[RMDB]
RNA sequence: GGGAACGACUCGAGUAGAGUCGAAAAUCUUGAGAAUAUCGUUGGCAGGGACUUGUAAGUUAACUGUUCCUGCGCCUGCGUUCAAUGCUGUGAGUCGUCGCUAAUCAAGGUUGCCCGCUGCUCCAGCCUCCCUCGUGGAUCGGGAAUCGUGACUCGGGAUGUUCUUAGAGUUCGCUCUAAGAACAUCAAAAGAAACAACAACAACAAC
Reactivity to 2A3 in 0.01 (KOAc 150mM, MgCl2 10mM, bicine 150mM(pH8.5), 24C), signal-to-noise 4, nucleotides 027 to 156: u000c010u010u060g040a040g050a130a100u120a040u180c000g050u050u040g050g010c010a000g020g010g010a010c030u110u120g100u230a190a220g080u210u240a090a030c030u030g020u060u020c000c000u000g000c010g000c010c000u010g000c010g020u070u110c100a080a060u110g010c030u040g060u060g100a050g020u060c020g010u000c010g000c080u070a050a060u080c040a030a040g030g000u020u030g060c020c000c000g020c070u070g020c010u020c020c000a030g020c040c010u040c040c010c000u050c050g050u080g050g020a060u060c030g010g000g030a040a100u090c090g050u020g030a040c010u000c000g000g060
Reactivity to DMS in 0.01 (KOAc 150mM, MgCl2 10mM, bicine 150mM(pH8.5), 24C), signal-to-noise 2, nucleotides 027 to 156: u000c040u020u000g000a090g000a140a110u000a070u000c020g010u000u000g030g030c000a070g000g030g000a020c030u000u020g010u010a100a170g030u000u020a080a070c050u000g000u040u000c000c010u000g010c010g010c030c010u000g010c030g010u000u010c100a080a150u000g010c030u000g020u000g010a070g020u000c060g040u000c060g010c020u000a090a170u000c050a040a080g030g020u010u010g000c010c040c040g050c050u000g000c010u000c020c020a100g030c020c020u010c050c020c000u000c070g040u010g040g010a100u000c080g000g030g020a090a050u000c060g010u010g010a260c030u000c030g050g020
Structure probing data (2A3 and DMS) for a 207-nucleotide construct. 2A3 adducts were read by reverse transcription with SuperScript II with manganese. For DMS, 5,805 sequencing reads were counted. Source: RMDB library OK3TST, as collected in RNAgym.